[RMDB]
RNA sequence: GGGAACGACUCGAGUAGAGUCGAAAAGGGAGAGCCGAGCAGAGGCAUAGCGAACUGCGCACGGUGAAGCCUUGAGGGAAGGCCGUAGGACCCGGGUUCGAUUCCCGGCAGCUCCACCGAAGGGCCACCCUCAGUGGUAUUUCGAUACCACUGAGGGAAAAGAAACAACAACAACAAC
Reactivity to 2A3 in 0.01 (KOAc 150mM, MgCl2 10mM, bicine 150mM(pH8.5), 24C), signal-to-noise 3, nucleotides 027 to 126: g000g010g000a100g010a000g020c010c010g020a020g000c010a010g040a050g060g060c120a170u160a050g060c060g060a060a040c010u050g000c040g000c070a080c070g010g020u040g010a050a030g050c000c010u030u050g030a080g010g030g030a050a070g050g000c010c010g060u060a070g030g030a050c000c030c000g000g000g010u040u090c070g020a040u030u030c000c000c000g000g000c010a030g010c010u020c010c000a070c010c030g030a050a030g020g010g000c010c000a030
Reactivity to DMS in 0.01 (KOAc 150mM, MgCl2 10mM, bicine 150mM(pH8.5), 24C), signal-to-noise 2, nucleotides 027 to 126: g000g000g000a070g000a300g000c000c010g020a150g020c020a000g030a150g040g020c090a150u020a090g000c090g030a110a120c020u000g000c020g000c210a100c020g000g000u000g000a210a300g010c000c010u010u030g000a180g000g000g000a120a130g010g010c030c040g010u010a080g010g010a120c200c000c010g000g000g010u020u020c200g000a300u060u030c000c000c010g010g020c180a110g030c090u000c010c020a160c090c060g000a110a110g000g000g000c000c060a130